[RMDB]
RNA sequence: GGGAACGACUCGAGUAGAGUCGAAAACGGGGCUAGCGAGUGGAUGUUCCGCCUCCCCAGGGUCCCGAGUGAGGCUUAUCCCGGGGAACUCGGCCCAGUCCCGAGAUGGCCGCGUCCGAGGUUCCCAAUCGCCCAUCGUUCGCGAUGGGCAAAAGAAACAACAACAACAAC
Reactivity to 2A3 in 0.01 (KOAc 150mM, MgCl2 10mM, bicine 150mM(pH8.5), 24C), signal-to-noise 6, nucleotides 027 to 129: c000g000g030g010g000c020u010a020g020c010g060a020g020u230g050g020a080u110g110u150u040c030c000g040c030c020u020c000c000c000c000a020g020g000g000u040c000c020c030g000a050g070u210g030a110g020g020c040u130u120a080u130c000c000c000g010g000g000g010a020a010c000u020c030g100g000c040c010c000a020g050u020c000c000c000g020a050g010a040u130g010g000c000c030g060c020g060u030c010c020g030a050g010g060u010u010c000c000c000a010a040u100c040
Reactivity to DMS in 0.01 (KOAc 150mM, MgCl2 10mM, bicine 150mM(pH8.5), 24C), signal-to-noise 3, nucleotides 027 to 129: c060g000g000g130g020c110u020a080g060c080g040a170g020u070g000g040a150u030g030u020u070c030c070g020c160c030u040c050c000c020c010a090g000g000g000u020c070c010c030g010a110g000u090g020a100g040g040c240u100u060a000u070c030c030c030g000g000g000g000a100a020c060u030c030g020g050c100c120c000a000g000u020c010c000c080g000a100g000a150u020g020g010c060c020g020c190g010u100c030c000g010a110g050g030u020u020c010c000c080a050a050u040c160

Source information: The record gives the reactivity of an RNA of 170 nucleotides to 2A3 and DMS. For DMS the reverse transcriptase was MarathonRT. Conditions: 150 mM KOAc, 10 mM MgCl2 and 150 mM bicine (pH 8.5), 24 C.